[RMDB]
RNA sequence: GGGAACGACUCGAGUAGAGUCGAAAACUCGGAAAACGAGGAGCUACGAAUAUGCGAAAGUAGCGAUCGCAUAGAAAACGAUGGAAACAGAUGGAAACAUCGGAAGAAAAGACAUCUGGAAAGAAAAGGGUAUAUCUUACUUCGGUAAGAUAUACCCAAAAGAAACAACAACAACAAC
Reactivity to DMS in 0.01 (KOAc 150mM, MgCl2 10mM, bicine 150mM(pH8.5), 24C), signal-to-noise 3, nucleotides 027 to 126: c000u040c000g020g010a090a060a130a120c000g010a020g020g020a180g000c120u000a050c090g000a110a090u010a020u010g000c050g000a070a190a130g000u000a060g020c090g000a080u000c000g000c020a050u000a070g000a050a080a070a140c140g000a050u000g010g030a190a090a130c040a010g000a010u000g020g040a050a060a060c110a060u010c010g020g060a070a040g010a050a070a100a110g000a100c010a000u010c000u050g010g040a030a070a110g000a110a120a070a040
Reactivity to 2A3 in 0.01 (KOAc 150mM, MgCl2 10mM, bicine 150mM(pH8.5), 24C), signal-to-noise 4, nucleotides 027 to 126: c010u010c000g040g050a130a160a150a100c020g000a010g030g020a020g060c010u140a100c080g180a100a060u100a040u140g030c020g060a100a030a170g060u060a020g090c030g070a010u000c020g000c050a040u030a020g090a010a060a030a030c060g000a000u100g010g110a060a080a060c000a000g080a060u070g050g060a190a060a000c010a070u030c000g070g110a060a070g100a020a080a000a000g150a010c010a000u000c030u050g070g100a030a100a100g110a030a080a080a000
This 177-nucleotide RNA was probed chemically with DMS and 2A3. For DMS the reverse transcriptase was MarathonRT. The reactions ran in a buffer of 150 mM KOAc, 10 mM MgCl2 and 150 mM bicine (pH 8.5), at 24 C. For 2A3 the reverse transcriptase was SuperScript II with manganese. Source: RMDB library OK1LIB, as collected in RNAgym. The DMS profile rests on 3,200 reads. For 2A3, 2,368 sequencing reads were counted.